This 177-nucleotide RNA was probed chemically with 2A3 and DMS.
[RMDB]
RNA sequence: GGGAACGACUCGAGUAGAGUCGAAAAAUCCUAGCGAUCAGAGUACGAUCGACUAGGAUCCAUGCUGUGGAUCCGGUACCUAGUCAGGUACCAUGACAUGGCACACUCUGAUCCAUGGUACUACAUGCGCCAUGGCUACUUUCGAGUAGCCAUGGCGAAAAGAAACAACAACAACAAC
Reactivity to 2A3 in 0.01 (KOAc 150mM, MgCl2 10mM, bicine 150mM(pH8.5), 24C), signal-to-noise 1, nucleotides 027 to 126: a000u030c000c000u000a000g000c040g010a010u000c040a050g100a060g260u300a050c090g010a040u000c000g250a270c040u050a000g040g020a000u000c000c010a010u050g020c010u040g010u030g000g040a060u000c030c090g010g000u020a020c000c000u090a140g270u200c110a020g060g020u040a030c000c000a030u110g040a020c010a070u030g010g000c070a020c000a010c010u060c030u000g040a040u020c020c000a030u030g030g020u000a100c050u050a060c010a150u090g120
Reactivity to DMS in 0.01 (KOAc 150mM, MgCl2 10mM, bicine 150mM(pH8.5), 24C), signal-to-noise 1, nucleotides 027 to 126: a100u000c000c000u000a020g010c030g070a010u000c000a070g000a220g000u010a140c200g000a030u020c010g000a170c020u010a050g030g000a030u000c040c080a260u000g060c050u000g030u000g010g010a110u020c070c220g020g000u000a010c000c000u010a140g010u000c220a090g020g000u020a030c030c040a040u000g010a060c030a050u030g000g000c010a080c300a080c140u000c100u000g000a040u020c000c000a020u000g010g020u000a080c070u020a030c230a040u000g000

Values cover nucleotides 27 to 126. For DMS the reverse transcriptase was MarathonRT.